[RMDB]
RNA sequence: GGGAACGACUCGAGUAGAGUCGAAAAGACGUGGCUUUAAGCCUCUUUCGGGAGGUUGCUACACGCUCAGUCUAACAAUCGAGUCGACGUGCCCUGGUAACAAAUCGAUCCUGCGGGCAGUCCAGGGCGAGAUGUGAGAAGUCCGUCUUGUACCUGGCUUCUCUAAGGAGUUCGCUCCUUAGAGAAGAAAAGAAACAACAACAACAAC
Reactivity to DMS in 0.01 (KOAc 150mM, MgCl2 10mM, bicine 150mM(pH8.5), 24C), signal-to-noise 1, nucleotides 027 to 156: g030a040c030g020u000g000g030c080u000u010u000a100a110g030c000c000u010c010u000u010u010c300g020g000g010a030g040g020u010u000g010c000u010a000c010a030c020g000c040u000c040a160g000u000c040u040a070a100c050a090a220u000c020g010a060g030u000c030g020a090c110g000u000g030c020c000c010u000g050g020u000a070a170c070a010a120a070u010c040g010a160u000c000c000u000g030c110g000g010g000c060a070g010u000c000c020a010g030g040g010c000g000a050g020a060u000g040u030g000a070g020a140a220g000u010c040c010g000u000c000u000u010g000u000a020c000c000u010g010g000
Reactivity to 2A3 in 0.01 (KOAc 150mM, MgCl2 10mM, bicine 150mM(pH8.5), 24C), signal-to-noise 4, nucleotides 027 to 156: g050a020c030g060u100g010g010c040u050u140u200a090a020g010c020c000u000c000u010u040u060c130g080g010g000a000g030g000u080u080g000c020u090a070c020a020c030g000c000u050c040a070g030u020c040u050a130a020c090a080a150u050c030g020a010g030u030c030g020a060c080g070u080g000c030c000c000u030g000g050u100a120a080c050a120a130a090u140c110g050a080u050c020c020u090g020c070g030g020g010c000a000g030u000c000c010a010g010g000g000c010g010a000g000a000u040g130u190g030a050g020a130a070g160u000c010c000g000u000c000u000u000g050u050a240c010c010u000g000g000